Conditions: 150 mM KOAc, 10 mM MgCl2 and 150 mM bicine (pH 8.5), 24 C. The record gives the reactivity of an RNA of 177 nucleotides to DMS and 2A3. For DMS the reverse transcriptase was MarathonRT. Source: RMDB library OK2TST, as collected in RNAgym.
[RMDB]
RNA sequence: GGGAACGACUCGAGUAGAGUCGAAAAAGUGACGCCACGACCGCCGAUACUUCAUCGGCACAGGCGGCCAGCAUCGCGGUGGUUGGGGCUGCCGCGGCGGCAUUGGCCGCGCUCAAUGCCGAGCCGAACCUUCCAAUUGUUUCGACAAUUGGAAGGUAAAAGAAACAACAACAACAAC
Reactivity to DMS in 0.01 (KOAc 150mM, MgCl2 10mM, bicine 150mM(pH8.5), 24C), signal-to-noise 4, nucleotides 027 to 126: a080g010u000g000a120c190g000c020c030a050c100g000a060c100c050g000c020c010g000a190u000a060c110u000u000c120a120u000c010g000g000c020a030c120a040g010g010c000g010g010c020c000a080g030c040a100u000c010g020c000g020g010u000g000g010u020u010g010g000g010g010c010u000g010c010c000g020c000g000g010c290g010g000c050a120u010u010g000g010c020c030g010c040g000c040u000c060a050a080u000g000c020c010g000a040g020c070c070g000a120
Reactivity to 2A3 in 0.01 (KOAc 150mM, MgCl2 10mM, bicine 150mM(pH8.5), 24C), signal-to-noise 3, nucleotides 027 to 126: a000g080u050g030a040c040g030c040c000a070c070g050a060c020c040g000c010c010g030a040u050a140c030u070u100c050a100u010c010g000g000c020a010c030a020g030g010c020g010g000c000c000a010g000c020a000u030c020g000c010g020g010u040g030g030u090u170g090g040g080g020c010u010g000c010c000g000c000g010g010c070g110g010c030a060u040u120g020g010c030c020g010c030g080c020u020c020a040a030u020g000c000c010g010a010g010c030c030g050a050